An RNA of 207 nucleotides, treated with DMS and 2A3 and read out base by base.
DMS (dimethyl sulfate) methylates the pairing face of unpaired adenines and cytosines.
Conditions: 150 mM KOAc, 10 mM MgCl2 and 150 mM bicine (pH 8.5), 24 C.
DMS adducts were read by reverse transcription with MarathonRT.
RNA sequence: GGGAACGACUCGAGUAGAGUCGAAAACUUGUGCGCGCGCCCGAAGCCUCUAUAUAUCGAGUGGCGAGGGCACGGAUUGAUGACUUCGACGGCGGGUCGGUACCUUGCCCAGCCCGAGACCCAGCCAGCUUGAUGUAGGUGUGGAUACGCUGAUACCCGUCCACAUGUAAUUCGUUACAUGUGGACGAAAAGAAACAACAACAACAAC
Reactivity to DMS in 0.01 (KOAc 150mM, MgCl2 10mM, bicine 150mM(pH8.5), 24C), signal-to-noise 1, nucleotides 027 to 156: c060u010u000g040u010g000c030g020c050g040c000g090c010c030c010g040a170a300g050c090c010u020c030u000a080u020a260u020a070u010c110g000a180g000u020g020g020c030g010a160g030g010g030c000a000c060g010g010a090u000u010g010a100u010g020a040c050u040u000c030g010a100c090g030g020c000g010g000g000u000c010g000g010u010a000c030c020u020u000g010c010c020c020a040g000c000c000c050g000a170g000a060c000c020c070a070g010c050c010a040g010c000u020u000g060a090u000g010u010a080g020g010u010g050u010g020g020a130u000a090c030g010c030u000g010a190u020a000c090c000
Reactivity to 2A3 in 0.01 (KOAc 150mM, MgCl2 10mM, bicine 150mM(pH8.5), 24C), signal-to-noise 2, nucleotides 027 to 156: c020u040u130g040u070g060c050g010c030g010c010g000c060c000c000g030a090a050g050c020c020u020c030u020a110u020a080u010a070u290c190g020a030g050u070g020g000c000g020a110g000g010g030c000a000c000g000g020a040u060u190g040a050u050g020a020c030u000u000c050g050a050c010g030g010c020g030g010g020u030c020g000g000u020a050c000c010u000u000g000c000c020c010a010g020c030c000c000g040a030g030a060c030c000c000a010g070c020c000a000g010c010u100u070g040a040u100g090u150a030g000g030u000g030u090g050g040a020u090a130c070g000c020u040g000a070u150a100c070c050